Chemical mapping of a 177-nucleotide RNA with DMS and 2A3.
The reactions ran in a buffer of 150 mM KOAc, 10 mM MgCl2 and 150 mM bicine (pH 8.5), at 24 C.
Source: RMDB library RFM100, as collected in RNAgym.
RNA sequence: GGGAACGACUCGAGUAGAGUCGAAAAGGACUAGUACCGUGAGGGAAAGGUGAAAAGUACCCCGGGAGGGGAGUGAAAUAGUACCUGAAACCGUGCGCUUACAAUCCGUCAGAGCCUGCGCCACUUUAAUGUAGGCGCAGUUCGCUGCGCCUACAUUAAAAGAAACAACAACAACAAC
Reactivity to DMS in 0.01 (KOAc 150mM, MgCl2 10mM, bicine 150mM(pH8.5), 24C), signal-to-noise 4, nucleotides 027 to 126: g000g000a080c060u010a080g010u020a130c200c050g040u050g000a100g000g020g020a080a110a060g000g000u020g000a020a110a130a150g000u030a100c040c000c000c030g020g020g030a130g000g000g000g000a040g010u010g000a090a070a060u020a100g000u020a030c030c000u000g010a090a090a120c040c020g030u010g000c060g030c080u010u010a050c080a040a070u020c010c010g000u010c050a080g000a080g010c060c040u010g000c090g020c030c050a110c030u000u040u010
Reactivity to 2A3 in 0.01 (KOAc 150mM, MgCl2 10mM, bicine 150mM(pH8.5), 24C), signal-to-noise 2, nucleotides 027 to 126: g020g020a020c060u060a030g030u050a070c020c020g000u050g070a110g040g050g040a060a060a080g030g020u070g050a040a040a030a020g080u160a130c000c000c020c000g040g050g000a120g010g020g000g010a050g050u040g070a000a070a000u080a070g050u060a050c030c020u070g020a100a010a010c000c000g050u090g020c010g010c010u020u010a010c050a070a120u020c010c050g030u080c040a050g030a050g090c000c010u080g030c010g010c010c020a050c010u040u020u000